[RMDB]
RNA sequence: GGGAACGACUCGAGUAGAGUCGAAAACUAUGCAGAUUCGUCUGCAUAGAGACCCGAUGAAGCGGCACUUACACAGCUUCAUACACGUAAGAAGUGCAAUUAAGGGACGAGGGUUCGCCCUCGUCAACAGAGUCAGAAUCUUCGGAUUCUGACUCUGAAAAGAAACAACAACAACAAC
Reactivity to 2A3 in 0.01 (KOAc 150mM, MgCl2 10mM, bicine 150mM(pH8.5), 24C), signal-to-noise 3, nucleotides 027 to 126: c000u010a000u010g010c000a000g000a020u020u080c100g170u000c080u000g020c000a000u000a000g010a000g000a020c000c000c000g000a040u030g020a010a000g000c060g060g000c040a010c050u060u110a050c150a000c010a030g000c000u000u000c000a010u020a020c150a010c060g120u090a030a050g040a080a020g060u010g020c000a060a100u240u150a120a140g190g010g020a000c000g000a010g040g030g000u050u070c160g100c000c000c010u010c000g000u010c000a000a000
Reactivity to DMS in 0.01 (KOAc 150mM, MgCl2 10mM, bicine 150mM(pH8.5), 24C), signal-to-noise 2, nucleotides 027 to 126: c000u000a020u000g000c000a000g000a040u000u020c230g000u000c000u010g000c000a000u000a000g000a140g000a130c010c000c000g020a060u000g010a020a000g040c020g030g000c040a030c080u000u000a140c190a050c100a140g000c000u000u000c000a040u000a170c070a150c150g000u020a130a090g000a080a100g020u000g010c060a160a110u000u020a080a140g040g030g000a020c020g010a030g020g000g030u000u020c200g000c000c000c000u000c000g000u000c030a030a060
Notes
Chemical mapping of a 177-nucleotide RNA with 2A3 and DMS. For DMS, 1,610 sequencing reads were counted. For DMS the reverse transcriptase was MarathonRT. It was measured as part of the RMDB library M2PK50. 2A3 adducts were read by reverse transcription with SuperScript II with manganese.